The data come from the RNA Mapping Database (RMDB), library 15KREP. The record gives the reactivity of an RNA of 177 nucleotides to DMS. For DMS the reverse transcriptase was MarathonRT.

[RMDB]
RNA sequence: GGGAACGACUCGAGUAGAGUCGAAAACGCGAGGAGGUGGAGAUACCAUGCCGACCCGAAGAAGGAAAGGAGGACACGGACGACAAACCGUAGGUACUCUUGCCCUUUAUUGUUGGGUGCACCCUGGGGUCCAACAAAUGUUCGCAUUUGUUGGACCAAAAGAAACAACAACAACAAC
Reactivity to DMS in 0.01 (KOAc 150mM, MgCl2 10mM, bicine 150mM(pH8.5), 24C), signal-to-noise 1, nucleotides 027 to 126: c160g040c000g000a000g000g000a160g010g010u000g000g000a130g000a150u000a080c060c030a030u000g000c060c000g010a110c020c000c000g000a050a250g010a010a040g000g030a120a300a100g000g010a000g000g010a210c090a040c000g000g000a000c060g010a080c300a040a090a050c000c030g020u000a000g000g000u000a250c010u000c010u050u000g000c300c010c000u000u000u000a200u030u000g010u000u000g000g000g080u000g010c150a030c060c010c000u000g000g000